[RMDB]
RNA sequence: GGGAACGACUCGAGUAGAGUCGAAAAAGAUCUGCAAAUUUGAAGGCUCCAGCAGUCACAAAUUUAUGGCAAAACCUGUGUUAAAAAGCAGGUGAGAUUGCUUAAGAGGAACAUAAGUACCAGUUCGUCUAGCAUUACGAUUCGUCGUAAUGCUAGAAAAAGAAACAACAACAACAAC
Reactivity to DMS in 0.01 (KOAc 150mM, MgCl2 10mM, bicine 150mM(pH8.5), 24C), signal-to-noise 3, nucleotides 027 to 126: a090g000a050u000c040u000g030c080a050a060a070u000u010u010g000a120a190g010g000c010u000c030c230a110g010c100a020g030u020c030a170c060a010a050a050u000u010u000a060u020g000g000c040a050a030a110a060c010c000u020g000u010g000u000u010a080a090a120a090a270g000c000a010g010g010u010g010a070g000a130u000u010g010c020u000u010a070a060g010a100g000g010a020a030c060a040u010a040a080g010u010a170c090c020a070g010u010u000c090g000
Reactivity to 2A3 in 0.01 (KOAc 150mM, MgCl2 10mM, bicine 150mM(pH8.5), 24C), signal-to-noise 2, nucleotides 027 to 126: a020g030a070u040c020u080g020c020a000a080a240u030u020u060g090a300a120g010g010c010u050c040c080a060g000c040a000g010u040c000a010c000a020a070a010u090u230u100a180u170g030g010c000a020a020a000a000c010c000u000g000u010g020u120u100a090a140a020a000a000g000c010a000g000g040u000g000a010g000a010u020u070g000c000u090u050a090a030g040a020g060g000a050a030c010a060u130a090a020g060u040a040c040c000a010g020u010u080c010g020